RNA sequence: GGGAACGACUCGAGUAGAGUCGAAAAAGAGUUGCGUGACCUCCACCUCGGGGCAGGCUUCGUACACGCGAGCCACAUAGCGCGCGCAGAGGAACGUCAGGUUGGCGUCCCCGCUGCGCGCGCCCACGGCGCCGUCGAGGCCGCCAUCGGCGCCGCGACGGAGAUGUACCUUCGGGUACAUCUCCGUAAAAGAAACAACAACAACAAC
Reactivity to 2A3 in 0.01 (KOAc 150mM, MgCl2 10mM, bicine 150mM(pH8.5), 24C), signal-to-noise 1, nucleotides 027 to 156: a000g070a000g000u060u090g010c070g020u040g070a200c020c040u030c010c030a050c000c030u050c020g080g010g000g010c090a130g040g000c040u090u040c020g030u090a050c060a010c100g010c020g010a020g030c010c010a090c040a110u180a040g010c000g000c000g000c000g000c000a000g010a030g000g030a040a010c000g010u010c020a080g090g300u180u160g020g010c010g000u020c060c030c000c010g020c030u010g000c000g000c000g000c010g000c000c000c000a000c000g000g010c010g000c050c000g040u050c030g020a030g060g000c000c020g040c000c010a060u050c000g000g000c000g000c000c010g010c040g030
Chemical mapping of a 207-nucleotide RNA with 2A3. Conditions: 150 mM KOAc, 10 mM MgCl2 and 150 mM bicine (pH 8.5), 24 C. Reactivities are given for positions 27 through 156. The data come from the RNA Mapping Database (RMDB), library OK3TST.